This 207-nucleotide RNA was probed chemically with 2A3 and DMS.
[RMDB]
RNA sequence: GGGAACGACUCGAGUAGAGUCGAAAAGAUCGGAAACAGCAGCAGGUGAGUCCGCCUUAUGUGAAGGAUCGGCUGAAACACGAGGAAAUACUGAGCCAACGCAAUACGGUAGCCGAACAGUAGCAACAAAACGCUUACGUGUUCGCACGUAAGCGAACUAAGUUUGAAUGUUCGCAUUCAAACUUAGAAAAGAAACAACAACAACAAC
Reactivity to 2A3 in 0.01 (KOAc 150mM, MgCl2 10mM, bicine 150mM(pH8.5), 24C), signal-to-noise 9, nucleotides 027 to 156: g030a040u080c040g030g020a060a050a060c020a040g050c010a010g010c010a010g020g030u050g030a050g060u040c040c030g020c030c020u130u110a140u120g090u060g060a060a020g040g020a040u080c040g020g000c030u050g050a090a070a010c080a020c060g040a040g040g060a060a090a030u140a080c060u060g020a010g000c010c030a050a030c060g010c060a030a050u060a120c040g050g010u030a010g020c020c010g020a010a010c010a030g040u080a020g030c030a010a070c020a050a090a020a020c020g000c000u000u000a000c000g000u010g020u040u060c160g020c070a000c000g000u000a000a000g000c000g000a010a000
Reactivity to DMS in 0.01 (KOAc 150mM, MgCl2 10mM, bicine 150mM(pH8.5), 24C), signal-to-noise 4, nucleotides 027 to 156: g010a090u000c060g010g000a120a070a100c040a100g020c040a080g010c050a070g030g010u010g010a110g040u000c030c050g020c020c010u000u000a080u010g040u020g020a090a140g020g020a080u000c030g020g030c030u000g000a110a080a080c060a080c040g010a070g010g000a090a090a130u000a070c020u000g000a150g000c010c020a050a100c060g020c040a070a090u000a180c030g010g020u000a060g020c050c010g000a050a070c020a070g030u000a060g000c060a050a120c090a050a050a070a130c030g030c000u000u000a000c000g060u010g020u000u000c290g000c010a020c010g020u010a010a030g030c010g000a010a040